Chemical mapping of a 177-nucleotide RNA with DMS and 2A3.
For 2A3, 23,526 sequencing reads were counted.
DMS adducts were read by reverse transcription with MarathonRT.
The data come from the RNA Mapping Database (RMDB), library OK1LIB.
RNA sequence: GGGAACGACUCGAGUAGAGUCGAAAAAGAGCUUCGGUUCUGGAUGAACUGGGGUUUAUCCAUGAAUACGGCCUUAGUGUACCGAUGAAUCGCGAACGGGCGUUGCAGUAUUACAAGCAGGCCUGUGCAUAAAUUAGGUGUUCGCACCUAAUUUAUGAAAAGAAACAACAACAACAAC
Reactivity to DMS in 0.01 (KOAc 150mM, MgCl2 10mM, bicine 150mM(pH8.5), 24C), signal-to-noise 9, nucleotides 027 to 126: a040g000a120g000c010u010u030c090g000g010u000u000c010u000g000g000a030u000g010a000a000c010u010g030g020g010g010u000u000u000a010u000c000c010a040u050g010a040a020u010a060c030g000g000c070c010u000u000a080g010u010g010u010a160c030c020g010a130u030g010a070a130u020c060g010c140g020a110a050c050g000g000g010c010g010u020u010g000c010a100g020u030a130u040u040a100c240a100a110g000c030a040g000g010c000c000u000g000u000g000
Reactivity to 2A3 in 0.01 (KOAc 150mM, MgCl2 10mM, bicine 150mM(pH8.5), 24C), signal-to-noise 9, nucleotides 027 to 126: a000g120a030g000c050u280u280c120g010g000u010u000c010u020g050g020a050u060g010a020a010c050u110g070g060g200g000u010u000u010a010u000c000c000a040u300g020a020a010u090a060c010g010g010c000c000u050u060a100g060u060g040u160a050c010c020g030a090u160g110a110a130u180c120g010c060g100a080a030c020g000g030g000c060g100u090u020g000c010a010g060u130a110u210u210a130c110a160a060g000c010a000g010g010c000c000u020g010u030g010